[RMDB]
An RNA of 177 nucleotides, treated with DMS and read out base by base. The RNA was probed in 150 mM KOAc, 10 mM MgCl2 and 150 mM bicine (pH 8.5) at 24 C. DMS adducts were read by reverse transcription with MarathonRT. It was measured as part of the RMDB library TTRINS. Reactivities are given for positions 27 through 126.

RNA sequence: GGGAACGACUCGAGUAGAGUCGAAAAGAUAUGGAUGCGACUUGCCAUCCAACUUAGUGGACAUGCCUAGUCUCGGAAACGAGAUAAGGCAACAGCCACUAAGUUGGAUGGCAACGCAUCCUAAGUCGUCUUUAUGGAUCUUCGGAUCCAUAAAGACAAAAGAAACAACAACAACAAC
Reactivity to DMS in 0.01 (KOAc 150mM, MgCl2 10mM, bicine 150mM(pH8.5), 24C), signal-to-noise 1, nucleotides 027 to 126: g060a090u020a290u010g010g000a030u000g000c010g030a100c300u000u000g030c020c000a000u020c000c000a000a000c000u000u000a000g010u010g000g010a050c220a150u000g030c000c000u010a300g010u000c000u000c010g000g000a070a150a280c010g000a020g000a010u010a120a050g010g010c000a000a030c260a130g030c010c000a000c000u000a010a000g000u020u000g030g000a040u000g000g010c000a000a000c010g030c000a000u000c000c000u040a010a090g020u000c120